[RMDB]
RNA sequence: GGGAACGACUCGAGUAGAGUCGAAAAAUCGGAAGAAAUUUGUACCUUUUGAGACGAAGGUUUGUAUACCGAGGAACGUGUUUAAGCGGAUACCGCAUCGCUCGGGGACGUCGUUCUCCUCGCGGUUGUACUAAGCUGAAUUCGUUCAGCUUAGUACAAAAGAAACAACAACAACAAC
Reactivity to DMS in 0.01 (KOAc 150mM, MgCl2 10mM, bicine 150mM(pH8.5), 24C), signal-to-noise 4, nucleotides 027 to 126: a090u000c020g020g030a050a090g010a200a040a110u010u010u040g010u010a070c040c010u010u000u010u000g000a120g000a080c130g000a040a030g020g000u010u010u010g000u020a080u000a120c020c010g010a030g000g030a080a090c070g000u010g000u020u000u020a070a110g030c030g000g020a110u020a040c020c060g030c030a100u020c050g030c020u010c070g000g000g000g000a040c170g020u000c030g020u000u000c010u000c010c070u020c120g000c080g010g000u000u000
Reactivity to 2A3 in 0.01 (KOAc 150mM, MgCl2 10mM, bicine 150mM(pH8.5), 24C), signal-to-noise 9, nucleotides 027 to 126: a010u050c020g030g040a090a030g110a080a200a080u210u240u150g090u110a060c010c000u010u020u030u080g120a110g010a020c090g020a040a010g020g000u030u050u140g100u050a120u040a060c000c010g000a050g020g030a070a030c020g020u060g050u130u210u240a090a030g020c010g000g030a050u080a140c020c030g000c040a050u030c020g010c030u010c000g020g000g010g020a010c100g030u050c010g000u030u000c010u020c000c000u030c040g070c040g080g010u010u000
Background
This 177-nucleotide RNA was probed chemically with DMS and 2A3. High 2A3 reactivity points to a flexible backbone, as in loops and unpaired stretches. 2A3 adducts were read by reverse transcription with SuperScript II with manganese.